[RMDB]
RNA sequence: GGGAACGACUCGAGUAGAGUCGAAAAUUAGUCUUCUAGUGUUUGAAUGUGGAUGGAAUUAAAGCUGGGUUUGUAGUGAGCCAUUAGGAUUAUGGCAAAUGUCUAGUGUACAGAAUUCAGUGUAGGCCUUCCUUAAUCUGUUCGCAGAUUAAGGAAGAAAAGAAACAACAACAACAAC
Reactivity to 2A3 in 0.01 (KOAc 150mM, MgCl2 10mM, bicine 150mM(pH8.5), 24C), signal-to-noise 2, nucleotides 027 to 126: u070u020a000g000u010c020u040u070c000u080a040g040u010g100u080u110u170g090a130a080u100g000u040g110g000a050u050g040g060a040a060u100u060a150a050a030g010c030u020g000g020g020u000u080u110g050u030a100g040u030g130a000g080c040c010a020u040u020a120g040g050a050u080u050a000u130g000g000c000a080a030a030u070g030u000c060u050a040g000u040g010u120a000c020a040g100a040a030u080u050c040a030g020u010g080u080a000g040g000c000
Reactivity to DMS in 0.01 (KOAc 150mM, MgCl2 10mM, bicine 150mM(pH8.5), 24C), signal-to-noise 4, nucleotides 027 to 126: u000u000a090g000u000c040u010u000c050u000a080g010u010g000u000u010u010g010a070a050u000g030u010g000g010a070u000g010g010a080a080u010u010a060a090a170g010c030u000g010g010g020u000u000u000g020u010a040g020u010g010a170g000c030c010a020u000u000a100g010g010a090u000u000a020u010g000g010c030a030a080a050u000g010u000c040u000a060g020u000g020u010a050c070a100g010a060a050u010u000c040a060g010u000g010u000a060g000g010c130

Source: RMDB library RFMREP, as collected in RNAgym. Chemical mapping of a 177-nucleotide RNA with 2A3 and DMS. The 2A3 profile rests on 1,264 reads.